[RMDB]
RNA sequence: GGGAACGACUCGAGUAGAGUCGAAAAAAUUUGAUGUUGAACAUGAUCGCUGUUUUAGACUCCCAAUCUUGGGGCGAUGCGAUCUUAAACGCUCCUUUUGAAUUCACUAACAGCUCAACAGAUUGCGCAUAACUGAUGCUUUCGAGCAUCAGUUAUGAAAAGAAACAACAACAACAAC
Reactivity to 2A3 in 0.01 (KOAc 150mM, MgCl2 10mM, bicine 150mM(pH8.5), 24C), signal-to-noise 3, nucleotides 027 to 126: a000a010u250u140u160g060a120u140g010u130u080g020a030a020c020a040u110g000a020u010c010g000c020u010g090u090u060u010u080a110g030a120c030u000c060c000c000a020a080u070c050u100u090g010g000g000g010c030g010a000u060g000c000g000a000u010c000u010u010a080a130a020c020g000c030u040c000c050u000u010u050u140g120a120a100u140u090c040a030c080u030a100a000c010a080g030c020u000c050a000a050c030a070g150a270u060u110g060c150g020
Reactivity to DMS in 0.01 (KOAc 150mM, MgCl2 10mM, bicine 150mM(pH8.5), 24C), signal-to-noise 4, nucleotides 027 to 126: a060a080u000u000u000g000a100u000g010u010u000g010a050a090c070a070u010g000a020u000c060g040c000u000g010u000u000u020u000a120g010a160c230u000c000c010c010a090a120u000c100u020u000g000g000g000g000c020g020a150u010g000c010g000a020u000c010u000u000a070a090a090c070g000c010u010c010c000u010u000u010u010g000a070a090u000u010c080a100c110u010a040a060c100a060g000c050u000c050a020a050c080a030g000a070u000u000g010c160g020

Structure probing data (2A3 and DMS) for a 177-nucleotide construct.
For DMS the reverse transcriptase was MarathonRT.
2A3 adducts were read by reverse transcription with SuperScript II with manganese.
The DMS profile rests on 4,044 reads.
The RNA was probed in 150 mM KOAc, 10 mM MgCl2 and 150 mM bicine (pH 8.5) at 24 C.